[RMDB]
Source: RMDB library OK2TST, as collected in RNAgym. This 177-nucleotide RNA was probed chemically with 2A3 and DMS. For 2A3 the reverse transcriptase was SuperScript II with manganese. Reactivities are rounded to 0.1 and cut off at 0 and 3. DMS adducts were read by reverse transcription with MarathonRT.

RNA sequence: GGGAACGACUCGAGUAGAGUCGAAAAUUAGCAGUACACUACACACUGCUAAAACUAGGUAUUCAGGAGAGCGAAUUUGAUGAAUGCUGCGUAUUCUUCGCGAAUGGAGAUGAUCUAUUACUGGCAAUACCGUUAGAUGAUUCGUCAUCUAACGGUAAAAAGAAACAACAACAACAAC
Reactivity to 2A3 in 0.01 (KOAc 150mM, MgCl2 10mM, bicine 150mM(pH8.5), 24C), signal-to-noise 7, nucleotides 027 to 126: u020u000a000g000c000a000g020u090a030c100a050c180u280a060c120a010c020a000c050u010g000c000u010a010a000a010a030c030u030a040g080g000u030a050u030u060c020a020g050g060a050g080a020g070c090g090a110a140u090u090u150g070a080u070g020a050a040u050g010c020u020g000c020g020u030a090u090u030c000u050u050c020g030c040g080a060a060u080g020g010a050g010a040u130g020a040u020c020u040a070u070u100a060c030u040g110g010c020a040a080
Reactivity to DMS in 0.01 (KOAc 150mM, MgCl2 10mM, bicine 150mM(pH8.5), 24C), signal-to-noise 9, nucleotides 027 to 126: u000u000a000g010c000a010g010u010a100c170a140c180u010a120c270a150c180a040c000u000g010c000u000a000a020a110a140c080u010a090g000g010u000a040u010u000c040a040g000g010a110g000a050g010c100g010a060a080u000u000u000g010a180u000g010a040a040u000g010c010u000g010c110g000u010a080u000u000c030u000u000c060g010c060g010a050a060u010g010g000a030g010a080u010g000a100u000c040u000a040u000u000a080c080u000g010g010c120a080a180